[RMDB]
RNA sequence: GGGAACGACUCGAGUAGAGUCGAAAACACUUGUUAAAGUCCGAGACCACAAACAUAGCCCUCAUUCAGAGUGCCCAAGUCUGUAGCGGUAACAUGACAUUGGAAUUAGAACACUACGACCACCGUGGGCAUGGAACCCAUUCGUGGGUUCCAUGCCAAAAGAAACAACAACAACAAC
Reactivity to 2A3 in 0.01 (KOAc 150mM, MgCl2 10mM, bicine 150mM(pH8.5), 24C), signal-to-noise 1, nucleotides 027 to 126: c050a000c040u000u100g010u060u120a010a020a060g000u000c000c060g070a100g060a130c030c000a010c020a020a110a000c060a060u110a000g030c000c000c000u020c000a020u080u070c010a050g040a040g010u100g040c000c000c000a000a050g010u010c000u020g010u060a070g000c070g050g010u000a020a010c010a060u110g010a000c000a030u010u000g000g020a060a100u240u080a030g110a090a000c000a000c060u080a010c040g000a000c000c000a010c050c050g130u010g030
The record gives the reactivity of an RNA of 177 nucleotides to 2A3. The reactions ran in a buffer of 150 mM KOAc, 10 mM MgCl2 and 150 mM bicine (pH 8.5), at 24 C.